[RMDB]
RNA sequence: GGGAACGACUCGAGUAGAGUCGAAAAUGGACUGCGUUCGCGCAGUCCAAAAGAAUAGACGAACACUAGCGUAGAAGUGUUGAGGUCACAUAACUACGCAAAAAAGCUGAGUGUUCGCACUCAGCAACGUGUACCAGUAGUUCGCUACUGGUACACGAAAAGAAACAACAACAACAAC
Reactivity to DMS in 0.01 (KOAc 150mM, MgCl2 10mM, bicine 150mM(pH8.5), 24C), signal-to-noise 2, nucleotides 027 to 126: u000g000g020a000c000u010g040c000g020u010u010c220g020c000g050c010a000g040u000c000c000a000a010a070a070g000a100a110u000a090g010a110c090g000a070a050c000a020c120u000a090g010c000g010u000a010g000a130a180g020u010g010u000u000g000a120g040g010u000c080a040c050a040u000a040a300c000u010a020c030g010c030a000a010a130a070a050a110g010c010u000g010a000g060u000g000u000u030c220g040c000a020c010u010c020a000g000c010a050a030
Reactivity to 2A3 in 0.01 (KOAc 150mM, MgCl2 10mM, bicine 150mM(pH8.5), 24C), signal-to-noise 3, nucleotides 027 to 126: u070g010g010a000c000u000g030c010g020u030u050c120g000c020g000c110a000g000u010c000c000a000a020a000a010g010a030a050u130a040g090a040c050g030a090a000c040a000c070u040a040g000c000g010u020a010g020a170a030g010u010g050u060u120g080a090g130g100u100c030a010c000a060u080a040a020c010u000a000c000g000c000a000a080a030a030a000a080g000c000u010g000a010g000u010g030u050u060c160g010c000a000c000u010c000a010g010c030a030a050
Notes: The record gives the reactivity of an RNA of 177 nucleotides to DMS and 2A3. 2A3 adducts were read by reverse transcription with SuperScript II with manganese. The reactions ran in a buffer of 150 mM KOAc, 10 mM MgCl2 and 150 mM bicine (pH 8.5), at 24 C.